[RMDB]
RNA sequence: GGGAACGACUCGAGUAGAGUCGAAAACGCGAAAGCCCGCGACACGCCGAGGCAUCGGGGGAUUUUGUCUGGUGGGCGGGAAUCUGGGGCACGUUAGAACACGUUACAGUUUCGCUGCUAGCCUGACCACACUCAUUAGGUUCGCCUAAUGAGUGUGAAAAGAAACAACAACAACAAC
Reactivity to 2A3 in 0.01 (KOAc 150mM, MgCl2 10mM, bicine 150mM(pH8.5), 24C), signal-to-noise 3, nucleotides 027 to 126: c070g010c010g050a110a050a020g030c000c000c000g140c010g040a070c060a050c130g040c030c020g070a090g030g040c020a040u070c040g070g010g000g020g020a020u080u110u050u170g050u000c020u020g010g020u060g000g050g010c080g000g000g000a010a010u040c040u040g000g010g130g050c090a000c040g010u020u050a170g040a110a030c050a000c060g030u050u080a020c020a020g000u010u010u030c190g020c080u030g010c010u020a020g020c000c010u010g000a020c020
Reactivity to DMS in 0.01 (KOAc 150mM, MgCl2 10mM, bicine 150mM(pH8.5), 24C), signal-to-noise 4, nucleotides 027 to 126: c100g010c070g000a060a080a140g000c010c010c000g020c010g010a110c110a130c100g010c040c030g010a100g010g000c080a060u000c040g000g000g000g010g010a150u010u000u000u000g010u000c030u000g000g020u000g010g010g020c020g020g010g010a050a030u000c060u000g010g010g010g010c130a040c040g010u000u000a080g010a120a130c240a040c040g000u000u000a090c080a040g010u000u000u000c010g010c020u000g020c040u000a300g000c020c020u000g000a080c090